[RMDB]
RNA sequence: GGGAACGACUCGAGUAGAGUCGAAAAUUUGGUAUUUUUCCGUUAAUCAAAUUGCUCAUGAUUUCACCUCGUUGAUUAUGUUCAUAUAAAGUUUAUAUUGAUACUCAAUUUACUUACCCUAGAUUGGUCCAUUUUGUAAUUUCGAUUACAAAAUGGAAAAAGAAACAACAACAACAAC
Reactivity to 2A3 in 0.01 (KOAc 150mM, MgCl2 10mM, bicine 150mM(pH8.5), 24C), signal-to-noise 1, nucleotides 027 to 126: u040u030u030g000g010u050a090u060u090u000u000u000c030c040g060u030u070a050a040u040c050a050a100a120u030u030g000c000u000c000a010u000g070a070u130u120u020c000a040c020c050u050c030g050u100u090g010a020u010u060a020u060g060u110u080c010a010u070a000u030a170a120a010g020u020u090u020a070u070a070u090u150g010a070u020a020c020u040c100a000a000u000u040u100a010c020u040u100a070c060c010c000u120a180g080a300u120u190g050g060
Reactivity to DMS in 0.01 (KOAc 150mM, MgCl2 10mM, bicine 150mM(pH8.5), 24C), signal-to-noise 4, nucleotides 027 to 126: u000u010u000g010g010u010a050u010u010u000u000u020c100c070g020u020u000a070a070u010c020a030a080a090u000u000g000c060u000c020a040u000g010a070u000u000u010c060a060c070c120u010c180g010u010u000g000a050u010u000a040u010g000u010u010c010a020u010a050u010a050a090a170g010u010u000u000a030u000a080u010u000g000a070u000a050c030u010c050a010a010u000u000u000a050c090u000u010a110c060c030c180u010a060g010a140u010u000g000g000